[RMDB]
RNA sequence: GGGAACGACUCGAGUAGAGUCGAAAACGAAUGUCAGUAUUCCUGAAGAAUGGCUCUAAGCAAUGUACCUUGCAGAGCUCAAGCAGGGCUCUGCUGCAUCAUGCCCAUGAAGGUGCCUGCUGGUAGACGUCAUUCCCUACUUCGGUAGGGAAUGACGAAAAGAAACAACAACAACAAC
Reactivity to DMS in 0.01 (KOAc 150mM, MgCl2 10mM, bicine 150mM(pH8.5), 24C), signal-to-noise 2, nucleotides 027 to 126: c140g000a100a090u020g040u010c070a100g030u000a150u000u000c050c010u010g010a130a090g010a070a080u030g000g000c030u000c040u000a120a090g000c050a020a030u000g050u000a020c050c020u000u010g040c000a050g010a000g000c000u000c020a070a120g020c190a240g010g000g010c010u000c000u000g000c000u000g020c060a060u010c190a080u020g030c000c050c160a110u000g020a080a030g010g040u000g000c000c280u010g010c010u000g010g020u010a030g000a090
Reactivity to 2A3 in 0.01 (KOAc 150mM, MgCl2 10mM, bicine 150mM(pH8.5), 24C), signal-to-noise 1, nucleotides 027 to 126: c060g070a120a040u140g080u130c040a010g040u070a130u040u110c000c000u010g020a060a020g110a080a090u070g050g000c020u060c070u140a050a020g000c000a030a030u110g000u020a030c010c030u060u010g000c000a020g000a000g050c000u000c020a000a070g190c110a070g010g000g000c000u000c000u020g000c000u000g000c010a030u050c000a060u110g010c060c000c000a130u260g010a020a010g040g000u000g000c000c000u010g000c020u010g040g030u100a030g010a050
Record summary
An RNA of 177 nucleotides, treated with DMS and 2A3 and read out base by base. The 2A3 profile rests on 1,080 reads. DMS adducts were read by reverse transcription with MarathonRT. Conditions: 150 mM KOAc, 10 mM MgCl2 and 150 mM bicine (pH 8.5), 24 C. The data come from the RNA Mapping Database (RMDB), library OK2TST.